[RMDB]
RNA sequence: GGGAACGACUCGAGUAGAGUCGAAAAAGUUCUAGUCCUCACCUAAGAUCAGACUUACAUGGCCCUCAAAGCAAGAGCACUAGGUUGGGCUUUGUGGUGGGGAUAAGUGUCUCAUUUUUAGUCCCAAAUUAAAAACGAGAUUUUGGGCUGUACAUCACAUUUAGUAAAUCUUCGGAUUUACUAAAUGAAAAGAAACAACAACAACAAC
Reactivity to 2A3 in 0.01 (KOAc 150mM, MgCl2 10mM, bicine 150mM(pH8.5), 24C), signal-to-noise 5, nucleotides 027 to 156: a000g060u060u040c020u040a040g050u010c000c000u000c000a010c000c010u080a100a050g030a150u160c070a050g150a240c040u110u090a020c030a080u070g010g000c010c000c000u040c040a120a150a040g020c030a080a060g040a010g130c020a030c080u080a020g020g170u060u040g010g000g010c000u020u010u040g070u030g010g010u000g000g000g000g000a000u010a010a000g010u010g030u000c010u010c050a080u080u110u040u070u190a010g070u120c010c000c000a010a010a010u070u060a060a050a060a030a020c110g030a090g010a150u030u040u030u030g000g000g000c020u050g050u090a070c040a080u090c040a020
Reactivity to DMS in 0.01 (KOAc 150mM, MgCl2 10mM, bicine 150mM(pH8.5), 24C), signal-to-noise 4, nucleotides 027 to 156: a080g010u000u010c040u000a240g020u000c000c010u000c010a050c030c010u000a060a080g020a070u000c010a100g040a080c020u010u000a070c130a140u000g020g000c000c000c000u000c040a130a130a210g010c160a070a070g010a070g000c010a080c100u010a020g000g020u010u000g020g020g010c020u000u000u010g020u010g030g050u000g000g020g030g020a000u000a000a100g020u000g010u010c020u000c010a050u000u000u000u010u000a060g010u000c040c110c110a080a080a100u000u000a010a000a020a020a020c000g000a040g010a110u000u000u000u000g010g010g020c050u000g010u000a060c090a180u000c050a230

The record gives the reactivity of an RNA of 207 nucleotides to 2A3 and DMS. 2A3 adducts were read by reverse transcription with SuperScript II with manganese. For DMS the reverse transcriptase was MarathonRT. The reactions ran in a buffer of 150 mM KOAc, 10 mM MgCl2 and 150 mM bicine (pH 8.5), at 24 C.